[RMDB]
RNA sequence: GGGAACGACUCGAGUAGAGUCGAAAAAGAUAUGGACGUACCAAGGGAGCUUUACUCCGAUUAGUAGGAUCUCGGAAACGAGAUCCUACUAAUCGGAGUGAGCGAGGAUCUUGAACGUCCUAAGUCAGUAACAUUUCAGGUUCGCCUGAAAUGUUACAAAAGAAACAACAACAACAAC
Reactivity to DMS in 0.01 (KOAc 150mM, MgCl2 10mM, bicine 150mM(pH8.5), 24C), signal-to-noise 1, nucleotides 027 to 126: a120g000a030u010a300u030g000g010a010c000g010u000a100c190c020a020a030g010g000g000a030g030c000u010u000u020a080c010u000c000c010g010a010u010u000a000g020u000a000g000g000a020u000c010u010c000g000g000a110a140a240c010g000a010g020a000u000c000c000u000a000c000u000a000a000u000c000g000g000a010g030u000g010a000g030c030g010a070g010g020a010u000c000u000u000g010a100a020c000g000u000c010c000u000a030a090g010u000c040a190